This 177-nucleotide RNA was probed chemically with 2A3 and DMS. 2A3 adducts were read by reverse transcription with SuperScript II with manganese. It was measured as part of the RMDB library M2PK50.
RNA sequence: GGGAACGACUCGAGUAGAGUCGAAAAUGCUGAGCUUUCGAGCUCAGCAGAGCCAAGCAAGCAGCGCAACGAGACAAGACGAGCAUAAGAUCGAGCAUGCUACAAUACGGCACUUCGGUGCCGUAAACUCCAUUUCUUCCUUCGGGAAGAAAUGGAGAAAAGAAACAACAACAACAAC
Reactivity to 2A3 in 0.01 (KOAc 150mM, MgCl2 10mM, bicine 150mM(pH8.5), 24C), signal-to-noise 1, nucleotides 027 to 126: u040g020c010u000g040a020g030c010u070u030u300c240g050a020g000c020u010c000a000g000c000a000g000a000g000c000c050a060a020g100c060a040a000g010c010a000g020c010g030c140a090a070c050g030a020g050a060c040a120a000g130a070c120g040a010g050c000a040u040a140a050g070a090u080c010g010a030g060c050a010u030g030c010u070a080c030a060a050u060a040c010g000g010c010a000c000u030u160c140g070g000u000g000c000c000g000u010a000a000a000
Reactivity to DMS in 0.01 (KOAc 150mM, MgCl2 10mM, bicine 150mM(pH8.5), 24C), signal-to-noise 1, nucleotides 027 to 126: u000g030c030u010g000a000g050c000u000u000u000c150g020a060g010c010u000c000a010g000c010a000g000a130g040c060c000a090a140g000c090a060a100g010c050a020g000c040g000c060a030a090c050g010a080g000a100c140a020a050g010a060c020g000a100g040c050a040u000a110a060g030a080u010c080g000a100g000c100a030u000g000c100u000a040c120a070a140u000a010c030g010g020c000a000c000u000u010c150g040g000u000g010c020c000g010u000a010a010a100